[RMDB]
The record gives the reactivity of an RNA of 177 nucleotides to 2A3 and DMS. Source: RMDB library M2PK50, as collected in RNAgym. For DMS, 1,039 sequencing reads were counted.
RNA sequence: GGGAACGACUCGAGUAGAGUCGAAAAUAGCAGUCUUUCGAGACUGCUACAUUAAUAGUCGCUAGAAAACGAUCAAAACUAGCGACUAACAUAACGAUGGAAAAGACGCACCCUUCGGGGUGCGUAACUAGGUGAAUGGUUUCGACCAUUCACCUAGAAAAGAAACAACAACAACAAC
Reactivity to 2A3 in 0.01 (KOAc 150mM, MgCl2 10mM, bicine 150mM(pH8.5), 24C), signal-to-noise 1, nucleotides 027 to 126: u090a010g000c010a010g000u000c000u030u120u100c120g060a020g000a000c000u000g020c010u000a000c010a020u010u030a010a040u020a070g000u000c000g000c000u000a010g020a080a300a040a080c140g210a290u160c060a070a040a060a040c000u000a000g000c020g000a000c000u000a000a000c010a020u130a140a020c060g110a080u100g030g050a090a150a020a000g120a030c020g000c000a000c010c030c000u000u130c220g030g000g000g040u020g030c000g000u020a000a000
Reactivity to DMS in 0.01 (KOAc 150mM, MgCl2 10mM, bicine 150mM(pH8.5), 24C), signal-to-noise 1, nucleotides 027 to 126: u000a010g000c000a000g010u000c000u000u000u020c210g010a020g020a010c010u000g000c010u000a000c040a040u000u000a080a090u000a030g020u010c000g000c000u000a000g000a060a020a120a160c180g000a150u010c120a090a090a060a110c000u000a000g000c000g000a000c000u000a000a080c190a130u010a050a050c140g010a080u000g000g020a100a080a080a160g000a020c010g000c030a000c000c000c000u000u000c140g060g020g060g010u000g020c000g000u010a040a100
The reactions ran in a buffer of 150 mM KOAc, 10 mM MgCl2 and 150 mM bicine (pH 8.5), at 24 C.
For 2A3 the reverse transcriptase was SuperScript II with manganese.